[RMDB]
RNA sequence: GGGAACGACUCGAGUAGAGUCGAAAAGGAGCUCGAUGCUAGAAUUUUCCAUAACCUUAUGGAAAAGCUACUUUACGUUAGUAGAGUAGCUUCAUGAUAAGGUUAUCAUGAAUUCUAGCAUCGAGGAGAUAGGUUUCAUAUUCGUGUGAGGUCUAUCAAAAGAAACAACAACAACAAC
Reactivity to DMS in 0.01 (KOAc 150mM, MgCl2 10mM, bicine 150mM(pH8.5), 24C), signal-to-noise 9, nucleotides 027 to 126: g010g000a150g010c000u000c000g000a010u000g000c000u000a000g000a010a010u000u000u010u010c300c300a010u000a000a010c020c020u000u000a000u000g010g000a090a100a040a010g000c000u000a000c000u000u000u000a000c000g010u040u060a090g010u000a000g000a000g000u000a000g010c000u000u010c040a090u020g000a010u000a000a020g000g010u000u000a000u000c080a140u030g000a010a000u000u000c010u010a000g000c000a000u000c000g010a000g000g010a050
Reactivity to 2A3 in 0.01 (KOAc 150mM, MgCl2 10mM, bicine 150mM(pH8.5), 24C), signal-to-noise 9, nucleotides 027 to 126: g060g000a030g020c000u000c000g000a000u000g000c000u000a000g000a000a000u000u000u010u000c020c000a000u000a010a020c010c010u010u010a000u010g110g010a020a040a000a000g000c000u000a000c000u010u000u000a010c020g160u100u220a070g000u010a000g000a000g000u000a000g000c000u000u000c010a010u010g030a000u000a010a010g050g000u010u000a000u000c010a020u210g010a000a000u000u000c000u000a000g000c000a000u000c000g000a000g000g000a000